This 177-nucleotide RNA was probed chemically with DMS and 2A3. The reactions ran in a buffer of 150 mM KOAc, 10 mM MgCl2 and 150 mM bicine (pH 8.5), at 24 C. The DMS profile rests on 2,013 reads.

RNA sequence: GGGAACGACUCGAGUAGAGUCGAAAAUCGAAUACAAAAUUCCGUGUAUUGGACUACAUUCAGUCAAUGUUUUCCACAAGAAGCUCCCAUUGACCGGAUCGCCAUUCCCACUGCGUGGAAAACCAAACCCCUAAUUAGUGUUCGCACUAAUUAGGGGAAAAGAAACAACAACAACAAC
Reactivity to DMS in 0.01 (KOAc 150mM, MgCl2 10mM, bicine 150mM(pH8.5), 24C), signal-to-noise 3, nucleotides 027 to 126: u020c070g010a060a030u000a020c040a030a060a090a090u000u010c050c090g010u000g010u000a000u000u000g000g000a060c110u000a110c170a050u010u000c090a060g000u000c050a060a070u010g010u010u000u000u000c000c010a090c110a130a180g010a090a100g000c090u000c040c090c020a110u000u000g000a060c050c030g000g020a040u000c060g010c100c070a180u000u000c000c010c010a120c150u000g010c120g030u010g000g000a020a040a030a040c060c300a050a070a150
Reactivity to 2A3 in 0.01 (KOAc 150mM, MgCl2 10mM, bicine 150mM(pH8.5), 24C), signal-to-noise 2, nucleotides 027 to 126: u060c000g040a030a000u070a020c060a040a170a050a140u220u150c020c030g020u040g020u030a040u010u060g080g010a020c020u030a020c090a090u030u140c090a020g060u010c020a050a070u080g020u000u030u030u020c020c010a040c000a050a110g140a070a030g040c050u050c040c000c000a030u030u070g040a030c040c000g010g040a050u020c050g050c060c020a050u050u050c010c000c000a040c030u050g000c030g030u060g000g040a010a020a000a000c010c010a050a050a080